[RMDB]
RNA sequence: GGGAACGACUCGAGUAGAGUCGAAAAUCUAUGAUUUGAGACUUCUCUAACGAUGAAACAAAAAUGCCUUCGCAAAUGAAUUUAGCCGAAUCGUAGGAUGCCCAAUUAGUCCAUUUUUGGAGCGUCUACCUGCGCAACGUUUCGACGUUGCGCAGGUAAAAGAAACAACAACAACAAC
Reactivity to 2A3 in 0.01 (KOAc 150mM, MgCl2 10mM, bicine 150mM(pH8.5), 24C), signal-to-noise 2, nucleotides 027 to 126: u000c000u000a070u000g010a040u030u080u000g040a120g050a060c030u010u000c040u110c040u040a030a140c000g120a160u030g210a120a120a110c200a150a180a010a010a090u120g000c010c000u040u040c000g000c210a030a100a060u160g040a000a000u000u140u220a040g020c000c000g010a090a000u000c000g000u020a020g060g040a000u060g000c070c000c010a010a070u140u080a010g070u000c030c030a060u060u060u000u000u080g010g020a000g080c090g000u000c000u060
An RNA of 177 nucleotides, treated with 2A3 and read out base by base. For 2A3, 478 sequencing reads were counted. Source: RMDB library RFM100, as collected in RNAgym.